[RMDB]
Record summary
The record gives the reactivity of an RNA of 177 nucleotides to 2A3 and DMS. For 2A3, 1,027 sequencing reads were counted. For DMS the reverse transcriptase was MarathonRT. Conditions: 150 mM KOAc, 10 mM MgCl2 and 150 mM bicine (pH 8.5), 24 C.
RNA sequence: GGGAACGACUCGAGUAGAGUCGAAAAGAUGCCAUGCCGACCCGAAGAGGAAAGAAGGACUCGGACGCGAACCCGUAAGGUGAAACUUUCACAUUUAUUGGGGAGUACACUCGAGGAGUGGAAGGCGCACCACCAUCUAGUUCGCUAGAUGGUGGUGAAAAGAAACAACAACAACAAC
Reactivity to 2A3 in 0.01 (KOAc 150mM, MgCl2 10mM, bicine 150mM(pH8.5), 24C), signal-to-noise 1, nucleotides 027 to 126: g060a020u120g000c030c010a030u090g020c010c000g070a060c000c000c000g010a070a010g100a040g080g060a040a090a000g040a040a050g000g000a000c010u000c030g070g000a040c020g040c040g030a020a020c020c000c000g010u010a010a030g000g000u010g020a040a080a070c070u160u160u080c010a080c030a230u010u000u120a070u140u260g000g000g010g000a030g050u040a030c010a010c070u030c040g050a040g000g050a040g010u060g040g000a020a050g020g020c030g000
Reactivity to DMS in 0.01 (KOAc 150mM, MgCl2 10mM, bicine 150mM(pH8.5), 24C), signal-to-noise 1, nucleotides 027 to 126: g000a110u020g000c030c050a090u000g010c010c000g000a230c020c070c060g000a100a090g000a090g000g000a050a040a090g000a130a100g020g000a100c060u000c020g020g010a040c090g020c020g000a200a200c020c020c020g020u000a030a000g030g010u010g000a010a030a190c250u020u020u000c000a010c020a030u000u000u000a010u000u000g060g000g000g000a180g010u000a060c110a040c000u000c070g000a040g020g010a130g000u020g000g000a050a100g000g050c050g000